[RMDB]
RNA sequence: GGGAACGACUCGAGUAGAGUCGAAAACUGAUCUAGAUGUGAGUGUGACAGCAGUGAAGCACUCGUUUAAGUCCGCAAGCGUGCUAAGAGGAGAGCAGAUAGAUUAUAUACCAAAACCGGUGAUGGCCAUCCACUCGUCAUUCGUGACGAGUGGAUGAAAAGAAACAACAACAACAAC
Reactivity to DMS in 0.01 (KOAc 150mM, MgCl2 10mM, bicine 150mM(pH8.5), 24C), signal-to-noise 3, nucleotides 027 to 126: c100u010g010a110u010c080u010a040g010a110u000g000u020g010a040g000u020g000u000g020a240c050a080g010c180a080g020u000g010a070a300g000c020a030c020u000c030g000u000u010u010a050a120g010u000c020c060g000c040a050a090g010c070g020u000g000c040u000a100a090g020a120g000g000a090g000a050g030c040a060g000a100u000a050g000a060u000u040a080u010a080u030a110c050c020a030a030a090a090c060c040g010g010u000g000a050u000g030g020c120
Reactivity to 2A3 in 0.01 (KOAc 150mM, MgCl2 10mM, bicine 150mM(pH8.5), 24C), signal-to-noise 1, nucleotides 027 to 126: c020u020g010a120u050c030u100a090g020a160u100g240u080g040a030g030u000g000u070g000a040c010a040g000c050a090g090u000g110a020a000g000c000a000c000u000c000g020u030u020u010a070a070g040u000c010c010g000c100a080a060g030c010g100u030g000c010u070a100a020g010a010g120g040a040g000a000g020c000a000g000a050u100a000g020a030u120u000a080u050a000u040a110c010c000a040a000a060a080c030c030g000g000u070g040a130u050g050g000c000
Background:
Chemical mapping of a 177-nucleotide RNA with DMS and 2A3. 2A3 is a SHAPE reagent: it acylates the 2'-hydroxyl of flexible nucleotides of all four kinds. For DMS, 1,882 sequencing reads were counted. The 2A3 profile rests on 1,110 reads.